[RMDB]
RNA sequence: GGGAACGACUCGAGUAGAGUCGAAAAGUGGAAAGUUUCGACUUUCCACAAAAAAACCUUUGUGUCCCAAUGCAUCGAUCGGUACUGUGGCCCAUUGGGCCAUUACCGGGAGCAUUGGACACUCUGGUAAAAAUUGUCAGAUUUCGAUCUGACAAAAGUAUCACUACCGUUUCGACGGUAGUGAUACAAAAGAAACAACAACAACAAC
Reactivity to 2A3 in 0.01 (KOAc 150mM, MgCl2 10mM, bicine 150mM(pH8.5), 24C), signal-to-noise 2, nucleotides 027 to 156: g000u040g010g000a000a040a010g040u070u080u200c250g030a040c030u000u000u090c000c020a020c040a000a020a010a000a000a000a000c010c000u010u000u020g030u000g000u020c020c040c020a030a000u020g000c030a300u090c060g210a080u030c000g020g000u040a080c100u180g010u030g070g060c040c020c120a300u120u300g040g020g000c000c010a000u030u000a000c000c010g010g030g000a030g000c010a000u000u010g000g010a000c000a000c010u000c000u030g030g000u060a090a130a060a020a070u090u050g020u010c000a000g000a000u070u110u240c170g160a050u010c000u000g000a000c000a000a040a000a000